The record gives the reactivity of an RNA of 177 nucleotides to DMS and 2A3. For 2A3 the reverse transcriptase was SuperScript II with manganese. Reactivities are given for positions 27 through 126.

[RMDB]
RNA sequence: GGGAACGACUCGAGUAGAGUCGAAAAUGCAGGCACCGUCGUGACCGGAUUCCUUGACUCACUUUGUGUGCGCGUUGAUUGCGCACGGCCACCUUCCGCUCAGACCGGCGCGGAGGUGUAGCGAUAGCAAGACAUAGUAAUUCGUUACUAUGUCUUGAAAAGAAACAACAACAACAAC
Reactivity to DMS in 0.01 (KOAc 150mM, MgCl2 10mM, bicine 150mM(pH8.5), 24C), signal-to-noise 9, nucleotides 027 to 126: u010g010c040a110g010g010c040a040c020c050g010u010c040g010u010g000a130c040c020g000g000a160u010u000c030c030u000u010g010a080c070u000c050a060c090u010u010u010g020u010g010u000g010c000g010c000g010u010u020g010a150u020u010g010c000g010c000a010c010g010g010c040c020a030c020c010u000u000c020c010g010c030u000c070a120g010a110c100c060g000g000c130g010c040g010g000a020g000g010u000g010u010a050g010c020g010a120u020a100g010
Reactivity to 2A3 in 0.01 (KOAc 150mM, MgCl2 10mM, bicine 150mM(pH8.5), 24C), signal-to-noise 9, nucleotides 027 to 126: u160g010c040a050g120g000c010a010c020c020g110u080c040g020u030g060a240c010c010g010g010a050u090u070c010c000u040u100g040a060c010u030c060a070c040u070u160u160g160u070g000u010g040c010g000c020g060u050u160g250a190u110u190g000c000g000c000a000c000g000g000c010c000a020c000c010u090u050c010c010g020c010u040c030a050g040a210c020c040g020g000c010g000c030g010g010a010g010g000u000g000u010a020g000c020g060a070u100a040g060